The record gives the reactivity of an RNA of 207 nucleotides to 2A3. Source: RMDB library OK3TST, as collected in RNAgym. For 2A3, 471 sequencing reads were counted. High 2A3 reactivity points to a flexible backbone, as in loops and unpaired stretches.
RNA sequence: GGGAACGACUCGAGUAGAGUCGAAAAACUACCAACCUGUCAGAAAAGAUUGAAUUACUUGCAUACAAUAUGCAGCUCACCAGUCAUUGUGGAAACUGUCAUCCUAGUGGCGUUAGCAUCAACAACACUUCUAACGUGGACAAGAGGUGUCCUUGUGCGAGCUCACAAAAUUCGUUUUGUGAGCUCGAAAAGAAACAACAACAACAAC
Reactivity to 2A3 in 0.01 (KOAc 150mM, MgCl2 10mM, bicine 150mM(pH8.5), 24C), signal-to-noise 1, nucleotides 027 to 156: a000c080u130a080c010c050a020a030c000c060u100g100u120c030a000g130a120a100a070a030g060a110u160u160g050a110a100u280u130a190c050u030u070g000c060a030u060a160c080a100a110u060a020u260g000c000a010g000c000u010c030a010c040c000a030g030u040c010a030u050u030g050u090g080g040a030a070a130c050u040g060u150c040a010u000c000c070u020a000g070u020g040g010c010g010u000u030a050g000c020a030u070c030a020a030c010a070a010c030a030c050u060u060c060u100a070a080c060g120u110g050g030a020c050a040a140g030a040g000g090u000g000u000c000c030u000u000g090u000g000